[RMDB]
RNA sequence: GGGAACGACUCGAGUAGAGUCGAAAAUCUGGCAGGUCGCAGGUGGGCUCCCCAUGCACCACCUUGGCCUCCUUGGCCGUGAGGACCCCCUUGUCGAUGGCCAGGCUCCUAAAGUUGGUGCACAGCGUCUGGUAGUGACCCUUUAGCCACUCUGGGGGAUUUCCUCUGUAUUCGUACAGAGGAAAUCAAAAGAAACAACAACAACAAC
Reactivity to 2A3 in 0.01 (KOAc 150mM, MgCl2 10mM, bicine 150mM(pH8.5), 24C), signal-to-noise 2, nucleotides 027 to 156: u050c010u010g000g020c030a010g100g020u030c010g010c040a000g030g000u040g020g020g000c050u060c010c030c000c010a060u110g000c030a040c060c020a040c030c070u050u060g020g000c000c030u070c030c000u090u190g000g000c020c000g060u080g030a060g030g010a060c010c020c000c010c000u000u080g090u200c050g030a030u040g010g010c000c000a020g000g010c010u020c010c010u070a110a140a040g030u040u050g030g010u080g000c050a010c000a040g080c050g020u070c040u060g130g090u140a120g040u020g140a090c000c030c000u050u100u100a060g020c000c000a010c040u070c090u040g000g000g020g000
An RNA of 207 nucleotides, treated with 2A3 and read out base by base. It was measured as part of the RMDB library OK3TST. The RNA was probed in 150 mM KOAc, 10 mM MgCl2 and 150 mM bicine (pH 8.5) at 24 C. Values cover nucleotides 27 to 156. For 2A3 the reverse transcriptase was SuperScript II with manganese.